[RMDB]
Background:
Structure probing data (DMS and 2A3) for a 177-nucleotide construct. The reactions ran in a buffer of 150 mM KOAc, 10 mM MgCl2 and 150 mM bicine (pH 8.5), at 24 C.
RNA sequence: GGGAACGACUCGAGUAGAGUCGAAAACAUAGUCGGGUCGACACUGGUGACUAUACUGGAGAAGCGGAAUUCCGCCGAAGCAGCGGACCCCAUGGCAAACGAUCACGCCGUCGCGGCUGAUAUCGGCACGACUAUAAAGGUUCGCCUUUAUAGUCGUAAAAGAAACAACAACAACAAC
Reactivity to DMS in 0.01 (KOAc 150mM, MgCl2 10mM, bicine 150mM(pH8.5), 24C), signal-to-noise 8, nucleotides 027 to 126: c090a090u000a070g020u000c030g010g020g020u000c040g010a090c110a100c110u000g010g020u010g000a060c040u000a060u010a080c060u000g000g010a070g010a160a130g010c040g000g000a150a170u010u000c020c020g040c000c020g000a090a190g010c070a060g000c020g000g000a090c040c020c030c040a080u000g010g010c050a070a070a160c120g000a060u010c100a070c180g010c010c010g010u010c100g010c080g000g010c010u010g000a070u000a050u000c030g000g000c090
Reactivity to 2A3 in 0.01 (KOAc 150mM, MgCl2 10mM, bicine 150mM(pH8.5), 24C), signal-to-noise 6, nucleotides 027 to 126: c030a040u120a020g090u040c020g020g000g080u060c050g040a020c040a030c160u070g060g040u100g050a030c020u070a030u070a140c020u070g140g030a070g010a100a030g050c030g040g080a140a200u220u010c010c000g000c010c010g050a060a010g040c060a000g010c000g030g030a060c030c000c000c000a070u080g040g000c040a140a070a060c060g030a040u070c040a010c110g030c050c010g090u150c110g030c080g250g000c010u040g030a050u030a070u180c010g000g000c050